About this RNA: Structure probing data (DMS and 2A3) for a 177-nucleotide construct. Source: RMDB libraries RFM100 and RFMREP, as collected in RNAgym. Values cover nucleotides 27 to 126. The RNA was probed in 150 mM KOAc, 10 mM MgCl2 and 150 mM bicine (pH 8.5) at 24 C. DMS adducts were read by reverse transcription with MarathonRT. For 2A3 the reverse transcriptase was SuperScript II with manganese.

[RMDB]
RNA sequence: GGGAACGACUCGAGUAGAGUCGAAAACUGCAACUGCAAAUGGAAUAUUUGAAAACUUAUUCUAAUAUUCCUAUAUUGCUACUUCAUCAUGAAGUUGUUGCUAUAAAAAUUACUCUAGUUUGAGGGAGCUAUAGAGUAACUUCGGUUACUCUAUAGCAAAAGAAACAACAACAACAAC
Reactivity to DMS in 0.01 (KOAc 150mM, MgCl2 10mM, bicine 150mM(pH8.5), 24C), signal-to-noise 2, nucleotides 027 to 126: c070u010g010c060a010a020c020u030g000c010a000a020a170u000g000g000a050a000u000a000u000u020u000g000a010a010a180a170c230u030u060a030u000u000c010u000a010a000u000a020u010u000c010c000u020a050u030a120u000u000g000c010u010a070c000u000u000c020a130u010c200a170u030g000a000a010g000u010u010g000u000u000g000c000u010a100u030a000a080a120a070a060u020u100a050c010u000c000u000a100g000u030u000u010g000a050g000g000g010a190
Reactivity to 2A3 in 0.01 (KOAc 150mM, MgCl2 10mM, bicine 150mM(pH8.5), 24C), signal-to-noise 5, nucleotides 027 to 126: c020u030g000c010a000a030c020u080g000c000a000a000a110u050g000g000a000a000u010a010u000u020u030g020a020a030a040a080c080u260u200a160u210u030c000u010a000a000u000a000u000u000c000c000u010a020u010a000u040u010g000c000u040a020c000u010u000c010a210u040c020a180u290g010a020a020g030u090u120g000u000u000g000c040u040a020u180a160a120a010a010a010u150u110a050c000u010c010u020a100g180u090u100u150g050a040g010g030g010a030